Notes: The record gives the reactivity of an RNA of 207 nucleotides to 2A3. Source: RMDB library M2RFPK, as collected in RNAgym. The 2A3 profile rests on 1,106 reads. For 2A3 the reverse transcriptase was SuperScript II with manganese.
RNA sequence: GGGAACGACUCGAGUAGAGUCGAAAACAGGAAACUGGUUAAUCGUUUUCCUUGGUAGUAUAGCGGAAACCAUAAAUAAGAAGAACUCUAAGUGCUUGAGUAGAGUUAAAAUAAUUAGAGAGGCAAUUAAGGUACUCCACGUUCGCGUGGAGUACAAGUCAACGUUAGAGUUCGCUCUAACGUUGACAAAAGAAACAACAACAACAAC
Reactivity to 2A3 in 0.01 (KOAc 150mM, MgCl2 10mM, bicine 150mM(pH8.5), 24C), signal-to-noise 2, nucleotides 027 to 156: c000a000g050g020a000a030a000c050u100g030g100u130u200a080a110u100c030g000u000u020u060u030c020c000u000u050g050g020u010a060g010u020a060u150a080g060c020g010g020a120a000a000c000c000a020u050a140a080a040u090a110a100g070a060a020g030a020a010c000u000c010u020a000a050g010u050g130c040u080u030g030a030g050u030a010g030a020g000u010u040a020a070a000a000u060a000a010u100u060a020g020a010g010a010g030g030c000a000a050u090u130a150a050g030g000u000a000c000u000c000c000a000c010g030u060u050c230g010c010g070u010g000g000a000g010u000a000c000a000a020